The record gives the reactivity of an RNA of 177 nucleotides to 2A3.
Source: RMDB library RFM100, as collected in RNAgym.
The RNA was probed in 150 mM KOAc, 10 mM MgCl2 and 150 mM bicine (pH 8.5) at 24 C.
Values are in units of 0.01, from 0 to 300, in steps of 10.
For 2A3, 1,731 sequencing reads were counted.
RNA sequence: GGGAACGACUCGAGUAGAGUCGAAAAGAAAGAAAGAAAGAAAUGAUUCUGGUUUCAAUCCAGGCAAGUGUUUCUAUAUGUACAGAUAAUGUAGAAAAUCUUGUGUGGAUUGGAACCAGGGUCAUAAAGCGUCAUUACGAUUCGUCGUAAUGACGCUAAAAGAAACAACAACAACAAC
Reactivity to 2A3 in 0.01 (KOAc 150mM, MgCl2 10mM, bicine 150mM(pH8.5), 24C), signal-to-noise 2, nucleotides 027 to 126: g060a010a060a020g140a030a080a050g100a020a140a030g120a030a200a030u000g000a000u030u000c000u000g000g000u000u000u000c010a000a000u000c000c000a010g000g000c000a010a020g020u020g120u130u010u000c000u010a000u000a000u010g150u160a070c020a050g170a150u180a200a050u150g000u000a000g000a010a000a000a040u030c000u000u000g000u040g120u000g030g000a000u010u000g000g020a000a000c020c000a000g000g000g010u000c000a000u010a000a030